An RNA of 207 nucleotides, treated with 2A3 and read out base by base. The RNA was probed in 150 mM KOAc, 10 mM MgCl2 and 150 mM bicine (pH 8.5) at 24 C.

[RMDB]
RNA sequence: GGGAACGACUCGAGUAGAGUCGAAAAGGGGUCGAUGUGGAGGACGAGAGGGUAGGGAGCUCUGAAGCCUCCACGGAGCAUCGAUCUACCCAAGUUCGUCCGAUGAAACAUCGACGGAGGCACCCAAAACACACGGACUGUUCGCAGUCCGUGUGAAGUUAACAACCUUCUUCGGAAGGUUGUUAACAAAAGAAACAACAACAACAAC
Reactivity to 2A3 in 0.01 (KOAc 150mM, MgCl2 10mM, bicine 150mM(pH8.5), 24C), signal-to-noise 2, nucleotides 027 to 156: g130g020g020g000u020c010g000a010u010g000u010g000g000a000g000g000a020c070g040a070g020a040g240g000g000u030a000g000g010g000a000g000c050u050c070u030g000a070a020g000c030c060u000c010c030a030c020g000g010a000g020c000a010u300c010g000a000u000c000u000a010c050c000c000a010a070g210u300u300c030g020u000c000c000g070a260u010g000a010a000a010c000a000u000c000g000a000c020g000g000a000g000g000c000a080c000c010c010a050a080a000a040c000a000c000a000c000g000g000a000c020u020g020u110u100c280g040c230a000g000u040c000c000g030u000g010u000g000a000a000
Source: RMDB library RNAMAK, as collected in RNAgym.